[RMDB]
RNA sequence: GGGAACGACUCGAGUAGAGUCGAAAACAAUCAACAAUAUGGUUUGUGUAGUUAUGCUGAAAAUCGUUGAGGUUGUAUGGAAGAGGUUAACCGUAAGACCUUAAGUUGAAAAACUUUAAAAUUAAUCAAAAUCAUGUACACUUCGGUGUACAUGAAAGGUAAAGGUUUAGUUCGCUAAACCUUUACCAAAAGAAACAACAACAACAAC
Reactivity to 2A3 in 0.01 (KOAc 150mM, MgCl2 10mM, bicine 150mM(pH8.5), 24C), signal-to-noise 4, nucleotides 027 to 156: c030a010a110u130c040a020a080c030a060a100u100a080u170g020g040u040u070u040g040u040g010u050a080g040u080u110a080u150g030c070u070g070a070a050a050a060u130c040g030u030u040g000a010g060g010u030u010g050u050a080u090g040g020a100a050g030a020g060g000u050u070a020a070c020c010g020u040a060a010g020a010c010c010u020u020a030a020g010u010u000g030a070a050a030a040a040c030u080u120u180a090a110a070a090u080u210a080a080u130c040a070a100a000a100u000c000a000u000g000u000a000c000a000c000u040u030c180g040g000u000g000u000a000c000a000u000g000a010a000a000
Reactivity to DMS in 0.01 (KOAc 150mM, MgCl2 10mM, bicine 150mM(pH8.5), 24C), signal-to-noise 2, nucleotides 027 to 156: c020a090a070u010c000a080a080c040a140a150u000a100u000g000g030u000u000u010g000u010g020u000a070g020u010u000a090u020g070c030u000g000a070a120a050a080u000c020g020u000u000g010a100g020g020u000u000g010u000a060u010g020g030a070a100g020a060g000g020u010u010a090a130c000c060g000u000a090a140g000a020c010c010u000u010a010a080g020u000u020g000a170a110a110a130a050c000u010u000u020a060a040a060a150u000u000a050a180u000c060a070a090a150a180u000c000a000u000g030u000a010c010a010c000u000u000c230g000g020u000g020u000a000c000a000u000g000a010a030a070